RNA sequence: GGGAACGACUCGAGUAGAGUCGAAAAUAGGCAAGUCCUCUUGUAAGAAUCUUUUGGCAAAGAUGGGCCUGGGAGGCUUUUCUCACUUCCUGGGGCCCAGGCUUUGCAAUAAGUAUUCCAUUAUACUGUGGUACCUUGGGGCUACCUGAGAAUCCUCCAGUCUCCUUAUGUUCGCAUAAGGAGACUGAAAAGAAACAACAACAACAAC
Reactivity to 2A3 in 0.01 (KOAc 150mM, MgCl2 10mM, bicine 150mM(pH8.5), 24C), signal-to-noise 2, nucleotides 027 to 156: u240a020g000g020c090a100a020g060u150c000c030u060c040u050u020g060u070a090a110g070a140a150u090c010u060u090u100u110g100g010c000a000a010a000g000a000u030g010g000g000c000c020u030g020g000g000a010g010g000c020u240u120u150u000c040u040c000a010c030u030u000c000c000u080g090g020g080g000c000c000c000a000g010g060c010u030u000u000g000c000a000a010u060a000a000g060u030a040u000u150c030c000a030u120u050a100u090a190c110u090g000u060g130g000u080a060c000c000u000u010g010g010g040g010c010u050a010c010c000u060g050a070g150a100a090u070c010c080u080c000

The record gives the reactivity of an RNA of 207 nucleotides to 2A3. The reactions ran in a buffer of 150 mM KOAc, 10 mM MgCl2 and 150 mM bicine (pH 8.5), at 24 C.